An RNA of 177 nucleotides, treated with 2A3 and DMS and read out base by base. The 2A3 profile rests on 927 reads. The reactions ran in a buffer of 150 mM KOAc, 10 mM MgCl2 and 150 mM bicine (pH 8.5), at 24 C. The DMS profile rests on 1,435 reads. Source: RMDB library OK1LIB, as collected in RNAgym.
[RMDB]
RNA sequence: GGGAACGACUCGAGUAGAGUCGAAAAUGACGUUUGACUGCAGAUGCGUUUGUGUGGGUAGUAAAUGUAUCUUCUGCGUUUAAGUCGAUUUUGUCAACUAAAUUUGCGCUUUGUUACCCCUGAAAAACACGCUGGUAAUGUUCGCAUUACCAGCGUGAAAAGAAACAACAACAACAAC
Reactivity to 2A3 in 0.01 (KOAc 150mM, MgCl2 10mM, bicine 150mM(pH8.5), 24C), signal-to-noise 3, nucleotides 027 to 126: u090g020a020c030g000u040u060u130g130a120c040u120g000c000a010g000a080u070g040c080g000u000u030u040g090u000g020u050g020g130g000u030a030g000u000a010a050a140u080g010u030a050u000c020u080u030c050u040g020c020g040u030u030u190a110a030g000u010c030g000a030u020u050u150u200g030u000c030a100a060c110u160a060a090a130u140u060u040g150c140g010c020u130u070u070g080u150u160a140c000c030c000c000u060g060a140a010a000a000a000
Reactivity to DMS in 0.01 (KOAc 150mM, MgCl2 10mM, bicine 150mM(pH8.5), 24C), signal-to-noise 1, nucleotides 027 to 126: u020g000a030c000g000u010u000u000g060a130c000u000g050c010a010g000a060u010g040c040g000u000u020u000g000u030g000u030g000g000g020u040a140g000u060a000a010a020u000g000u030a000u080c080u000u000c040u030g020c050g000u000u020u070a130a030g000u020c040g010a000u000u000u000u080g010u010c000a150a120c100u090a060a070a070u000u000u040g000c140g000c080u000u050u040g010u000u000a150c080c020c000c010u010g070a120a080a030a010a050